[RMDB]
RNA sequence: GGGAACGACUCGAGUAGAGUCGAAAAUAUGCGGCAUUAGGUUUCCCGACUGGAGCGUAUGUAGCACCAACUGCGCGCAUCGCAUCUGUGACAGUUACGUCUCGGAUAACUACUAAUACUCCGUUUGGGCACUAGUUCUAUUCGUAGAACUAGUGCCAAAAGAAACAACAACAACAAC
Reactivity to DMS in 0.01 (KOAc 150mM, MgCl2 10mM, bicine 150mM(pH8.5), 24C), signal-to-noise 1, nucleotides 027 to 126: u110a150u020g000c000g000g060c000a020u020u010a170g000g010u000u000u000c000c000c070g010a250c270u030g060g000a000g040c040g000u020a050u040g000u000a020g040c080a100c110c080a230a070c050u020g000c120g010c100g000c080a150u000c020g020c090a010u000c050u000g040u010g020a020c170a160g000u000u000a070c080g090u010c030u000c000g000g000a040u010a110a020c020u020a150c030u020a050a150u020a070c000u000c020c070g000u000u000u030g020
Reactivity to 2A3 in 0.01 (KOAc 150mM, MgCl2 10mM, bicine 150mM(pH8.5), 24C), signal-to-noise 4, nucleotides 027 to 126: u230a040u050g040c010g020g000c020a040u010u180a090g090g050u020u030u010c000c000c000g010a040c080u120g060g010a030g000c050g020u070a100u100g050u040a030g030c030a030c050c020a050a040c080u060g000c040g000c030g000c080a030u010c040g010c010a060u000c000u000g040u030g060a030c020a130g030u060u180a090c110g040u030c040u030c010g020g010a040u070a130a050c040u130a030c010u030a090a050u050a140c030u030c040c010g000u000u070u250g060